RNA sequence: GGGAACGACUCGAGUAGAGUCGAAAAGGCGGAGACCAUCACGCGAGUGCUCUAUGAGGUCUUCAUCGAGUGGGGCAUCAGCGCCAAGGUCUUCGGGGCCACCACCAACUAUGGCAAGGACAUCGUGAAGGCGUGCUCCCUGCUGGACGUCGCAGUAGCUGCUGGAUUUAUUCGUAAAUCCAGCAGCAAAAGAAACAACAACAACAAC
Reactivity to 2A3 in 0.01 (KOAc 150mM, MgCl2 10mM, bicine 150mM(pH8.5), 24C), signal-to-noise 1, nucleotides 027 to 156: g000g000c010g010g010a000g000a000c000c000a080u190c050a000c020g020c000g060a070g000u020g010c000u000c000u020a040u010g050a020g000g050u050c030u120u110c210a090u090c010g000a000g000u010g000g000g000g000c000a020u050c060a090g010c000g070c080c010a030a030g030g010u000c000u010u000c020g000g000g010g000c000c020a000c000c010a030c050c020a020a020c050u100a040u150g040g040c050a050a090g050g000a070c000a030u100c170g020u120g120a110a010g080g050c030g020u020g030c050u020c000c000c010u000g000c030u050g020g100a020c060g010u060c050g100c100a090g020u120a020